[RMDB]
RNA sequence: GGGAACGACUCGAGUAGAGUCGAAAAAGCAGUAUGUACGCAUACUGCAAUCCAGAUGUUAAACUAUCGUUCUGGGAACAGUCGCUCUUACAAGCUGUUCCCAUGGAGAUAGCUUAGCAACUCCUAAUUCCAAUGUGAUCUUCGGAUCACAUUGGAAAAAAGAAACAACAACAACAAC
Reactivity to DMS in 0.01 (KOAc 150mM, MgCl2 10mM, bicine 150mM(pH8.5), 24C), signal-to-noise 2, nucleotides 027 to 126: a050g000c000a000g000u000a010u000g000u020a130c230g050c000a000u000a000c020u000g020c020a010a010u000c020c050a130g010a150u010g030u000u000a010a000a040c000u000a010u000c000g010u050u000c000u000g000g000g000a060a000c010a000g000u000c070g000c170u080c120u040u000a100c300a080a080g010c000u010g030u000u000c000c000c020a000u000g000g000a040g010a000u010a000g000c050u000u000a000g010c000a050a120c070u020c080c080u010a080a200
Reactivity to 2A3 in 0.01 (KOAc 150mM, MgCl2 10mM, bicine 150mM(pH8.5), 24C), signal-to-noise 4, nucleotides 027 to 126: a010g000c000a000g000u020a000u020g020u050a010c270g020c110a000u000a000c000u000g010c000a000a060u000c000c000a020g040a080u050g000u010u000a000a000a000c000u020a000u010c030g260u100u020c000u000g000g010g000a010a010c000a010g200u240c030g140c130u100c090u200u300a130c120a230a000g000c000u000g020u000u000c010c020c030a000u050g000g010a000g000a000u000a010g000c000u000u000a000g020c010a020a210c040u090c020c020u110a130a100